Source: RMDB library TTRDES, as collected in RNAgym. An RNA of 177 nucleotides, treated with 2A3 and DMS and read out base by base. Reactivities are given for positions 27 through 126. For 2A3, 5,063 sequencing reads were counted. The reactions ran in a buffer of 150 mM KOAc, 10 mM MgCl2 and 150 mM bicine (pH 8.5), at 24 C.

[RMDB]
RNA sequence: GGGAACGACUCGAGUAGAGUCGAAAAAAAGAUAUGGACUUUCUCUAGCGUGAGCUUGGAUUUACAGGUGAUGGUGUCGGAAACGACAUCUAAACCUGUUGUCAGCUUCGGGAAGUCCUAAGUCAAAGAUCGAAAAAUAGUUCGCUAUUUUUCGAUCAAAAGAAACAACAACAACAAC
Reactivity to 2A3 in 0.01 (KOAc 150mM, MgCl2 10mM, bicine 150mM(pH8.5), 24C), signal-to-noise 3, nucleotides 027 to 126: a010a020a020g100a040u130a090u140g010g000a000c020u070u150u020c080u070c080u170a110g090c060g220u230g110a010g010c080u180u230g200g010a060u300u270u260a010c000a000g000g000u000g010a040u300g020g010u000g010u000c000g000g020a040a060a080c020g000a000c000a000u000c000u020a040a020a010c000c000u000g000u000u000g010u010c000a000g010c000u050u030c040g000g000g010a010a000g010u010c020c000u010a200a010g020u000c030a080a080a070
Reactivity to DMS in 0.01 (KOAc 150mM, MgCl2 10mM, bicine 150mM(pH8.5), 24C), signal-to-noise 2, nucleotides 027 to 126: a060a090a080g000a060u000a300u000g000g020a030c010u010u010u000c010u000c090u000a100g040c280g020u010g000a030g000c030u010u000g020g010a040u000u020u000a000c000a010g000g010u000g000a150u020g000g000u000g000u000c000g010g000a170a100a200c000g020a020c000a010u000c000u000a160a220a010c000c000u000g000u000u010g000u000c030a090g000c020u000u000c090g000g010g000a020a030g000u000c000c010u010a010a070g010u000c040a080a140a130